An RNA of 177 nucleotides, treated with DMS and 2A3 and read out base by base. For 2A3, 3,513 sequencing reads were counted. For DMS the reverse transcriptase was MarathonRT. The reactions ran in a buffer of 150 mM KOAc, 10 mM MgCl2 and 150 mM bicine (pH 8.5), at 24 C. Values are in units of 0.01, from 0 to 300, in steps of 10.
[RMDB]
RNA sequence: GGGAACGACUCGAGUAGAGUCGAAAAGAUAUGGAAUAUGAAACUCGAUGUGGCGUUGAAAUCGGAAACGAUGGAGCCACAUUCGAGGAGUAUGUAUUCCUAAGUCAAAGGCUCGUUCGCGAGCCAAGUUCAGUGACAAGUUCGCUUGUCACUGAACAAAAGAAACAACAACAACAAC
Reactivity to DMS in 0.01 (KOAc 150mM, MgCl2 10mM, bicine 150mM(pH8.5), 24C), signal-to-noise 2, nucleotides 027 to 126: g010a040u000a300u000g010g000a030a000u000a010u000g010a270a170a140c000u000c000g020a010u000g020u000g010g000c000g020u000u000g000a060a110a010u000c020g000g000a130a090a110c000g020a010u000g000g000a110g000c020c000a000c000a000u000u000c020g000a010g000g010a050g000u010a060u030g000u010a000u010u000c010c000u000a060a120g000u000c030a070a090a100g010g020c000u000c000g020u020u020c200g030c000g000a000g030c000c000a010a020
Reactivity to 2A3 in 0.01 (KOAc 150mM, MgCl2 10mM, bicine 150mM(pH8.5), 24C), signal-to-noise 1, nucleotides 027 to 126: g020a000u070a050u200g000g020a000a000u020a010u060g030a010a000a010c000u000c010g000a000u000g010u010g010g000c060g220u300u060g000a050a010a000u000c020g000g070a060a000a030c000g000a000u010g010g000a000g000c000c030a000c000a010u000u000c000g000a000g000g000a000g000u030a040u300g010u010a020u000u000c000c000u020a190a040g050u020c030a130a090a070g010g000c020u010c030g030u120u080c220g020c010g110a010g000c000c000a000a020